The data come from the RNA Mapping Database (RMDB), library ARCHII. The record gives the reactivity of an RNA of 207 nucleotides to 2A3 and DMS. The 2A3 profile rests on 981 reads. The DMS profile rests on 2,217 reads.
RNA sequence: GGGAACGACUCGAGUAGAGUCGAAAAUCGAGGUUCGUUUACUUUAAGGCCUGCCUUAAGUAAGUGGUGUUGACGUUUGGGUCCUGCGCAAUGGGAAUUCAUGAACCAUGUCAGGUCCGGAAGGAAGCAGCAUUAAGUGAAACCUCUCAUGUGCCGCGAAUUUAGACAACUUCGGUUGUCUAAAUUCAAAAGAAACAACAACAACAAC
Reactivity to 2A3 in 0.01 (KOAc 150mM, MgCl2 10mM, bicine 150mM(pH8.5), 24C), signal-to-noise 2, nucleotides 027 to 156: u130c030g000a000g020g000u040u010c000g020u010u010u080a020c030u050u060u150a040a000g020g050c090c250u100g060c120c000u050u010a000a010g000u000a010a020g010u060g100g040u040g060u000u070g040a120c100g010u040u050u050g140g000g030u060c010c000u050g000c110g010c100a070a200u000g000g030g000a070a130u220u140c070a100u170g070a010a050c020c000a010u060g000u030c010a000g010g000u010c010c000g060g060a030a030g060g000a050a000g020c000a000g000c000a000u070u040a140a020g000u030g150a070a050a050c000c000u000c000u020c030a080u140g110u110g150c040c040g060c030
Reactivity to DMS in 0.01 (KOAc 150mM, MgCl2 10mM, bicine 150mM(pH8.5), 24C), signal-to-noise 1, nucleotides 027 to 156: u000c060g000a080g050g070u010u000c030g020u000u000u000a040c000u010u000u000a040a080g000g030c080c130u000g050c000c000u000u010a000a040g010u000a030a050g030u010g000g020u000g000u000u000g000a280c070g020u000u000u010g000g060g010u000c030c000u000g030c110g090c060a100a080u010g050g010g000a070a300u010u000c180a130u000g000a120a270c030c030a080u000g010u000c000a020g010g000u000c010c000g050g040a030a070g030g030a170a080g020c000a060g030c010a050u000u000a110a220g000u000g000a040a070a020c020c000u000c020u000c100a090u000g010u000g000c000c000g000c210